[RMDB]
This 177-nucleotide RNA was probed chemically with DMS and 2A3. The RNA was probed in 150 mM KOAc, 10 mM MgCl2 and 150 mM bicine (pH 8.5) at 24 C. For 2A3, 1,137 sequencing reads were counted. DMS adducts were read by reverse transcription with MarathonRT. For DMS, 2,114 sequencing reads were counted. 2A3 adducts were read by reverse transcription with SuperScript II with manganese.
RNA sequence: GGGAACGACUCGAGUAGAGUCGAAAAGCUUUACGAUCCACGGAGCGCUCACCCCAGGAUCGGAGGGGUGUGUCUUUGACAGCAGCCACCCAGAUUACCCCCAACGGGUAAUCGUGAAGGCGGGGUGAAUCGAGGCUUGAUUCGUCAAGCCUCGAUUAAAAGAAACAACAACAACAAC
Reactivity to DMS in 0.01 (KOAc 150mM, MgCl2 10mM, bicine 150mM(pH8.5), 24C), signal-to-noise 2, nucleotides 027 to 126: g000c040u000u000u040a120c070g000a060u000c030c000a150c180g010g000a050g020c120g030c060u000c020a010c000c000c030c050a160g000g010a090u010c060g000g010a110g000g030g050g000u000g000u030g010u020c030u000u010u020g010a060c140a040g020c130a090g020c040c000a100c030c000c010a120g000a010u000u000a000c000c000c000c130c290a180a090c220g000g000g010u000a000a000u000c000g030u000g020a170a080g000g000c160g010g000g010g000u020g000
Reactivity to 2A3 in 0.01 (KOAc 150mM, MgCl2 10mM, bicine 150mM(pH8.5), 24C), signal-to-noise 2, nucleotides 027 to 126: g000c010u050u040u090a020c020g000a000u020c030c040a070c050g010g050a080g050c150g030c040u000c000a020c010c030c000c000a040g090g000a090u060c080g030g010a070g010g000g000g000u000g010u000g030u010c010u100u070u180g120a100c060a030g020c000a000g010c030c000a010c010c000c000a020g000a000u010u000a000c000c020c040c050c060a070a130c080g000g000g000u000a010a010u000c010g010u070g080a050a050g030g000c050g000g010g010g000u020g020